Structure probing data (DMS and 2A3) for a 207-nucleotide construct.
The RNA was probed in 150 mM KOAc, 10 mM MgCl2 and 150 mM bicine (pH 8.5) at 24 C.
For 2A3, 1,589 sequencing reads were counted.
Values cover nucleotides 27 to 156.
For 2A3 the reverse transcriptase was SuperScript II with manganese.
RNA sequence: GGGAACGACUCGAGUAGAGUCGAAAAUGUGAAUGGGAGUUCACUCAUGAUUUGGUGCUCUGUUUGCCUAUUAUUGGUGUAUAGGAAUGCUUGUGAUUUUCACACAUUGAUUUUGUAUCCUGAGACUUUGCUGAAGUUGCUUAUCAGCUUAAGGAGACAGUACACGCUGAUUCGUCAGCGUGUACUGAAAAGAAACAACAACAACAAC
Reactivity to DMS in 0.01 (KOAc 150mM, MgCl2 10mM, bicine 150mM(pH8.5), 24C), signal-to-noise 2, nucleotides 027 to 156: u000g010u000g000a050a030u000g040g050g000a160g010u000u000c020a030c030u030c140a080u000g010a090u000u000u000g010g000u010g000c010u010c050u000g030u000u010u000g030c040c020u000a060u010u000a110u010u010g020g020u000g030u000a060u010a070g000g000a040a040u000g010c030u000u000g040u030g010a150u020u010u000u020c000a020c030a050c040a020u000u000g020a130u010u000u020u020g050u010a100u000c020c030u030g000a120g020a060c120u000u010u010g030c010u010g020a030a260g020u000u010g010c050u000u000a170u000c070a070g020c070u010u000a060a090g030g000a220g020a230
Reactivity to 2A3 in 0.01 (KOAc 150mM, MgCl2 10mM, bicine 150mM(pH8.5), 24C), signal-to-noise 3, nucleotides 027 to 156: u130g020u010g040a040a060u060g050g060g000a080g050u070u050c020a010c010u150c070a100u080g120a120u080u040u100g110g030u040g000c010u020c010u020g100u060u080u100g040c030c000u050a070u220u040a070u050u050g090g000u060g060u050a040u080a060g010g030a030a030u040g010c040u020u070g010u050g060a170u080u030u210u140c010a000c000a010c010a040u020u090g050a130u060u060u050u100g050u050a040u020c010c020u040g010a030g050a040c040u090u100u110g010c000u020g010a050a020g050u080u050g000c020u060u060a110u050c000a000g000c000u030u070a040a020g030g000a010g010a000